[RMDB]
RNA sequence: GGGAACGACUCGAGUAGAGUCGAAAAGAAAAUCCCGGUCCCGUCAGACAAAUCAGUGACAUGAUGGUCAUAGCGAAAGCACACCCACGAAAUGUCACUGAUGAAAAAGUGCGUGUGACCAAAAAAAACGUUCAUCAUUGUUCGCAAUGAUGAACGUAAAAGAAACAACAACAACAAC
Reactivity to DMS in 0.01 (KOAc 150mM, MgCl2 10mM, bicine 150mM(pH8.5), 24C), signal-to-noise 1, nucleotides 027 to 126: g000a140a150a130a140u000c020c000c020g000g050u000c000c000c000g060u010c080a140g030a120c080a050a200a010u000c000a000g000u030g000a010c000a040u000g000a160u000g020g000u000c060a140u020a150g000c020g000a280a040a170g000c000a030c140a240c280c020c010a010c080g040a040a100a010u000g000u000c000a020c000u000g000a000u010g000a030a020a000a070a080g000u020g000c000g010u000g050u020g020a010c000c000a030a000a000a030a030a030a050
Reactivity to 2A3 in 0.01 (KOAc 150mM, MgCl2 10mM, bicine 150mM(pH8.5), 24C), signal-to-noise 1, nucleotides 027 to 126: g010a010a100a000a030u040c020c000c000g030g000u020c000c000c000g020u000c040a040g030a270c040a060a160a000u080c010a000g020u040g000a000c000a010u090g010a200u040g040g030u100c060a140u270a090g000c010g050a040a030a000g030c020a030c010a020c020c010c000a020c070g000a180a140a000u000g010u000c010a020c020u000g000a000u000g000a000a000a000a010a000g130u190g000c000g040u090g160u300g000a040c000c000a010a000a000a000a000a000a000